Overview: The data come from the RNA Mapping Database (RMDB), library M2PK90. An RNA of 177 nucleotides, treated with DMS and 2A3 and read out base by base. The 2A3 profile rests on 5,424 reads. The reactions ran in a buffer of 150 mM KOAc, 10 mM MgCl2 and 150 mM bicine (pH 8.5), at 24 C.
RNA sequence: GGGAACGACUCGAGUAGAGUCGAAAAGUUUUUGGAUUACAUCAAUAGUCGCAUGAGCAGAAGUAAACCGAACAAGAAUUACUGCGGUAAUUCAAGUUCAAAGUUCACACUAUCGCAAUAAAUAUAACCUUAGUAUGUGAUUCGUCACAUACUAAGGAAAAGAAACAACAACAACAAC
Reactivity to DMS in 0.01 (KOAc 150mM, MgCl2 10mM, bicine 150mM(pH8.5), 24C), signal-to-noise 5, nucleotides 027 to 126: g000u000u000u000u010u010g020g000a080u000u000a040c080a100u010c160a060a120u000a030g010u000c050g010c070a060u010g010a070g010c040a060g020a070a090g020u000a040a040a050c070c150g010a020a020c010a040a300g000a020a010u000u000a010c010u000g030c160g040g010u000a000a000u000u000c000a020a300g010u000u000c010a050a080a150g010u000u010c040a050c060a100c060u000a070u000c060g010c060a070a040u010a010a060a090u000a070u000a080a150
Reactivity to 2A3 in 0.01 (KOAc 150mM, MgCl2 10mM, bicine 150mM(pH8.5), 24C), signal-to-noise 5, nucleotides 027 to 126: g040u030u030u040u130u160g100g000a070u100u080a060c030a080u070c040a050a120u050a060g040u030c040g020c160a060u070g030a020g000c040a020g010a170a010g070u080a040a040a020c060c050g000a000a000c000a000a040g000a020a000u010u000a000c000u020g050c070g170g010u010a000a010u000u000c010a000a010g000u000u000c000a000a010a010g010u030u050c030a030c010a000c040u070a080u140c020g000c060a030a080u070a180a130a000u190a070u050a110a050

For DMS, 4,227 sequencing reads were counted.